[RMDB]
RNA sequence: GGGAACGACUCGAGUAGAGUCGAAAACGCCGAGCCCGUCGAACCCGCCGACGUCGAGGACCUGCUCGACGCGGGCAAGCCGUUCGGCCUGAGGCCCUCAGCGAUCCUGCCGGCCUACGGCAUGGCCGGCGACACUGUGGUUCGCCACAGUGUCGCCAAAAGAAACAACAACAACAAC
Reactivity to DMS in 0.01 (KOAc 150mM, MgCl2 10mM, bicine 150mM(pH8.5), 24C), signal-to-noise 2, nucleotides 027 to 126: c060g040c010c050g000a160g010c000c040c050g000u020c020g010a060a070c000c090c140g010c030c030g030a070c020g020u010c000g000a030g020g010a230c250c300u000g000c020u000c010g000a020c010g000c000g000g000g000c020a050a110g000c120c120g020u000u010c020g000g000c000c100u010g010a080g000g000c030c030c030u000c110a060g020c010g020a100u000c050c010u000g010c000c010g020g000c010c000u010a130c140g010g000c130a040u000g000g000c010c010
Reactivity to 2A3 in 0.01 (KOAc 150mM, MgCl2 10mM, bicine 150mM(pH8.5), 24C), signal-to-noise 2, nucleotides 027 to 126: c000g040c000c010g020a010g010c010c010c000g000u000c010g010a010a000c000c000c030g030c020c010g170a300c010g000u010c010g000a010g020g070a300c030c100u270g080c000u050c040g010a000c000g000c000g010g010g000c110a030a010g050c070c160g010u010u020c000g010g020c010c030u070g010a100g010g010c000c050c010u060c020a000g000c010g030a000u020c000c010u020g000c000c000g000g030c000c030u100a120c090g140g010c050a070u130g000g020c010c070

Structure probing data (DMS and 2A3) for a 177-nucleotide construct.
2A3 adducts were read by reverse transcription with SuperScript II with manganese.
Reactivities are given for positions 27 through 126.
The RNA was probed in 150 mM KOAc, 10 mM MgCl2 and 150 mM bicine (pH 8.5) at 24 C.
The data come from the RNA Mapping Database (RMDB), library OK2TRN.